The record gives the reactivity of an RNA of 177 nucleotides to DMS and 2A3. The reactions ran in a buffer of 150 mM KOAc, 10 mM MgCl2 and 150 mM bicine (pH 8.5), at 24 C. It was measured as part of the RMDB library OK2TRN. The 2A3 profile rests on 1,106 reads.

RNA sequence: GGGAACGACUCGAGUAGAGUCGAAAAUCAAAUCAUCGGAGAUAGGAUCCAUAAAAUUCGGGAAAGCAUGGGCUGCCUAGUAGCUUGCACUCUGAGAAGCUUUCUCAUGUAUCAAGAGUCAUUUGCGCACCCAUAUCCGUUUCGACGGAUAUGGGUGAAAAGAAACAACAACAACAAC
Reactivity to DMS in 0.01 (KOAc 150mM, MgCl2 10mM, bicine 150mM(pH8.5), 24C), signal-to-noise 2, nucleotides 027 to 126: u010c060a060a080a040u020c070a100u020c030g000g010a090g010a120u020a040g000g000a130u000c010c040a120u010a070a120a100a120u000u010c130g000g000g000a030a020a050g020c010a150u010g000g000g030c170u010g010c010c070u000a090g000u000a070g000c020u000u000g010c100a030c100u030c070u000g000a080g050a100a070g010c060u000u000u000c030u000c000a080u000g020u000a060u010c080a080a090g000a080g000u000c060a070u000u000u000g010c150g010
Reactivity to 2A3 in 0.01 (KOAc 150mM, MgCl2 10mM, bicine 150mM(pH8.5), 24C), signal-to-noise 2, nucleotides 027 to 126: u020c000a040a030a110u060c050a000u140c070g070g030a100g000a100u100a070g050g030a010u000c000c050a030u110a060a130a020a040u080u130c070g000g000g000a000a070a050g020c050a060u050g000g000g000c020u050g010c010c030u070a150g100u030a040g040c030u030u050g020c040a030c040u010c010u030g050a080g020a160a010g010c000u000u090u040c010u010c000a000u150g080u010a080u110c060a040a020g010a010g110u010c070a060u010u090u210g030c100g000